[RMDB]
RNA sequence: GGGAACGACUCGAGUAGAGUCGAAAAUCCGCCGAAAGGGCAAAGGUUCCUUGGCAAUGUUCGUCAGCCGAGGGUUAGCCGAUCCUAAGGUCACCCCUAACAGGAAGUGAUCGAAAGGGAAGCUGGUACCGAUUGGUAUAUUCGUAUACCAAUCGGUAAAAGAAACAACAACAACAAC
Reactivity to DMS in 0.01 (KOAc 150mM, MgCl2 10mM, bicine 150mM(pH8.5), 24C), signal-to-noise 5, nucleotides 027 to 126: u020c000c020g010c050c030g000a070a120a100g010g020g030c090a070a090a170g000g010u020u030c010c000u010u010g020g010c000a090a120u040g000u010u020c100g000u000c100a140g020c020c000g000a020g000g010g010u010u020a090g010c010c000g000a160u000c000c010u010a090a300g000g010u000c010a020c000c030c010c010u010a100a130c270a190g000g000a090a140g030u000g010a000u000c000g010a060a050a070g000g000g000a090a130g000c030u010g000g020u010
Reactivity to 2A3 in 0.01 (KOAc 150mM, MgCl2 10mM, bicine 150mM(pH8.5), 24C), signal-to-noise 8, nucleotides 027 to 126: u010c000c010g010c010c000g190a220a110a080g120g000g010c100a120a040a010g040g030u060u060c000c000u000u000g000g000c080a100a110u090g030u130u160c170g110u150c100a130g180c050c010g000a000g060g010g010u090u210a010g000c000c010g010a070u050c000c010u040a070a010g010g000u000c000a000c000c000c000c020u060a110a010c030a040g050g010a140a180g030u000g000a000u010c020g020a150a120a020g010g000g000a040a020g040c090u070g020g040u030

Structure probing data (DMS and 2A3) for a 177-nucleotide construct. For 2A3 the reverse transcriptase was SuperScript II with manganese. Conditions: 150 mM KOAc, 10 mM MgCl2 and 150 mM bicine (pH 8.5), 24 C.